[RMDB]
RNA sequence: GGGAACGACUCGAGUAGAGUCGAAAAGCACUAGAGGGCGUAACGUCUGGGUGUAACCCAACUCUAGGUGUGCUGAUUAGCGGGCUUGACUCCGUAACAAAUAGGCACUGGUGGUAAAAAGCAUCCCUGACCAUAUACAUCUUCGGAUGUAUAUGAAUCUUUUAAUGGACUUCGGUCCAUUAAAAGAAAAAGAAACAACAACAACAAC
Reactivity to 2A3 in 0.01 (KOAc 150mM, MgCl2 10mM, bicine 150mM(pH8.5), 24C), signal-to-noise 2, nucleotides 027 to 156: g000c010a000c040u020a000g020a050g050g050g000c060g070u100a160a080c070g070u050c060u110g020g010g000u060g090u120a130a150c000c000c020a030a000c010u030c010u030a020g060g030u020g030u020g040c030u010g000a100u010u080a020g000c000g000g000g040c060u140u120g020a120c020u030c080c010g000u030a040a000c010a010a050a060u160a040g050g010c000a020c060u040g040g080u080g030g120u090a060a150a040a000a000g020c010a050u030c000c000c010u020g040a040c020c000a000u010a000u000a000c000a000u020c000u030u030c120g120g000a000u010g000u000a000u010a000u000g000a000a000
Reactivity to DMS in 0.01 (KOAc 150mM, MgCl2 10mM, bicine 150mM(pH8.5), 24C), signal-to-noise 2, nucleotides 027 to 156: g010c040a050c010u010a060g010a050g020g000g000c010g020u000a150a080c110g010u000c070u020g020g030g110u010g030u000a090a210c020c000c000a090a120c030u000c030u000a040g020g020u010g020u020g000c020u000g010a210u000u000a140g020c020g010g020g020c040u020u010g010a150c110u000c000c010g020u000a080a130c120a040a060a090u000a120g030g020c020a040c030u000g030g030u000g010g010u010a020a040a090a070a120g020c030a150u000c000c010c020u000g000a180c210c010a010u030a020u000a000c010a010u000c000u000u010c300g050g000a040u010g000u000a000u000a000u000g000a100a070
This 207-nucleotide RNA was probed chemically with 2A3 and DMS. In probing experiments dimethyl sulfate is read out at A N1 and C N3, which are open when not base-paired. The 2A3 profile rests on 1,390 reads. Values cover nucleotides 27 to 156.